[RMDB]
RNA sequence: GGGAACGACUCGAGUAGAGUCGAAAAGACAAGGGGAAUCCGACUGUUUAAUUAAAACAAAGCAUUGUGAUGGCCGGAGACGGUGUUGACACAAUGUGAUUUCUGCCCAGUGCUCUGAAUGUCAAAGAUCUACGGCUACGUUCGCGUAGCCGUAGAUAAAAGAAACAACAACAACAAC
Reactivity to DMS in 0.01 (KOAc 150mM, MgCl2 10mM, bicine 150mM(pH8.5), 24C), signal-to-noise 2, nucleotides 027 to 126: g000a080c120a060a010g010g030g000g000a060a140u060c010c300g030a140c130u000g020u000u000u000a070a110u050u040a070a010a110a050c020a060a110a220g000c010a000u000u010g030u020g050a170u000g000g010c000c000g000g000a150g000a210c000g000g000u000g000u040u050g050a300c110a030c020a000a010u000g000u000g000a040u000u000u000c010u000g010c000c000c000a060g000u030g040c050u000c040u000g030a140a000u030g010u000c060a060a030a050g000
Reactivity to 2A3 in 0.01 (KOAc 150mM, MgCl2 10mM, bicine 150mM(pH8.5), 24C), signal-to-noise 2, nucleotides 027 to 126: g000a010c050a040a030g000g060g040g070a140a080u100c060c050g010a030c090u040g150u010u060u070a250a200u090u170a160a030a000a010c050a050a070a000g000c000a000u060u050g010u000g000a240u100g110g010c000c000g000g000a020g010a040c040g070g000u200g140u270u230g120a000c000a000c000a000a000u000g010u000g010a010u030u070u030c090u070g010c000c000c010a000g050u040g020c010u000c030u020g070a110a050u130g040u100c070a000a000a120g070